[RMDB]
RNA sequence: GGGAACGACUCGAGUAGAGUCGAAAAGAAACAGGAUCGACAAGGGUGUAAAGAUCGCUCUGUUACUCGGCAUGAUACCACCGUUAUCGGGUCAACAGAGUAGUUGCAAAUGACAACAAUGCUCAGGAAGGGGUAGCACCGUUCGCGGUGCUACCAAUACCUUUGGUGGGUUCGCCCACCAAAGGUAAAAAGAAACAACAACAACAAC
Reactivity to 2A3 in 0.01 (KOAc 150mM, MgCl2 10mM, bicine 150mM(pH8.5), 24C), signal-to-noise 1, nucleotides 027 to 156: g030a000a060a000c030a000g040g000a040u010c020g010a030c030a060a080g080g040g030u040g010u050a090a120a070g050a020u040c030g010c030u010c000u010g000u010u010a010c010u010c010g010g000c040a050u100g030a020u090a100c030c050a040c010c040g030u020u080a040u110c030g000g000g000u020c010a000a000c000a000g000a000g010u050a010g000u020u000g040c050a040a090a130u130g030a060c010a010a010c000a050a110u090g010c020u020c020a030g020g170a080a070g000g040g040g000u010a000g000c010a000c030c000g030u060u100c090g020c040g080g000u000g000c000u000a000c000c000a000a000